[RMDB]
This 177-nucleotide RNA was probed chemically with DMS and 2A3.
The data come from the RNA Mapping Database (RMDB), library TTRDES.
The 2A3 profile rests on 2,373 reads.
RNA sequence: GGGAACGACUCGAGUAGAGUCGAAAAGAUAUGGAGCUGUCUAGAGGGAGUCGGAGAAUCGGAAACGAUUCGGACGACUUUGAUCUCUAGAGCAGCUCCUAAGUCAAAGUUUAGGUUCGCCUAAACACAAAUAGUGCUGGUUCGCCAGCACUAUUUGAAAAGAAACAACAACAACAAC
Reactivity to DMS in 0.01 (KOAc 150mM, MgCl2 10mM, bicine 150mM(pH8.5), 24C), signal-to-noise 3, nucleotides 027 to 126: g000a060u010a300u020g000g010a010g020c000u010g020u000c000u000a010g010a020g000g020g000a000g010u000c010g000g000a300g010a010a000u000c000g000g000a090a120a210c010g020a040u000u000c000g000g010a300c030g010a000c010u000u000u010g000a070u000c000u000c000u000a000g010a100g010c000a000g010c000u010c000c000u010a000a080g000u010c040a160a150a140g000u000u000u000a010g000g010u010u010c300g030c010c000u010a010a030a020c010a300
Reactivity to 2A3 in 0.01 (KOAc 150mM, MgCl2 10mM, bicine 150mM(pH8.5), 24C), signal-to-noise 1, nucleotides 027 to 126: g040a010u090a010u260g020g010a000g020c010u000g020u050c010u040a000g010a010g010g100g010a020g020u020c030g000g010a120g000a070a020u010c020g000g000a020a080a090c020g010a000u020u000c020g010g300a000c000g010a000c000u280u060u040g050a080u020c000u000c000u000a000g000a000g000c000a000g000c010u030c000c000u030a020a000g000u000c020a060a040a040g010u000u040u010a010g020g020u010u030c260g060c030c030u040a010a000a020c050a010

Notes: Conditions: 150 mM KOAc, 10 mM MgCl2 and 150 mM bicine (pH 8.5), 24 C. Values cover nucleotides 27 to 126. DMS adducts were read by reverse transcription with MarathonRT.